[RMDB]
RNA sequence: GGGAACGACUCGAGUAGAGUCGAAAAGAAAGAAGGCGUAAUCGCCGUGUACGAGCUCCACGAUCAAUGAUUUUCUCGCCACUCGGCAUUGAUCGGACGUACCUCGGAUUGCCGCCUUACAAAGUUAAUACUAGAUUAAAUAAACCGUAGUGGCAAAUAUUUACCAGUCGUUCGCGACUGGUAAAUAAAAAGAAACAACAACAACAAC
Reactivity to 2A3 in 0.01 (KOAc 150mM, MgCl2 10mM, bicine 150mM(pH8.5), 24C), signal-to-noise 1, nucleotides 027 to 156: g140a010a160a050g160a030a010g000g000c000g000u010a040a040u060c030g020c280c000g030u060g080u070a000c000g000a030g090c100u070c070c110a030c040g010a000u000c000a000a000u000g060a100u110u110u250u060c100u100c170g000c000c000a000c010u000c000g070g000c010a010u000u000g000a000u000c000g000g000a000c090g000u010a000c010c030u060c060g000g010a020u040u040g000c010c030g010c000c000u030u000a040c070a030a050a010g030u100u150a070a060u080a270c060u110a060g080a200u150u300a240a140a130u110a080a170a040c000c030g000u070a080g000u000g000g000c000a000a000a000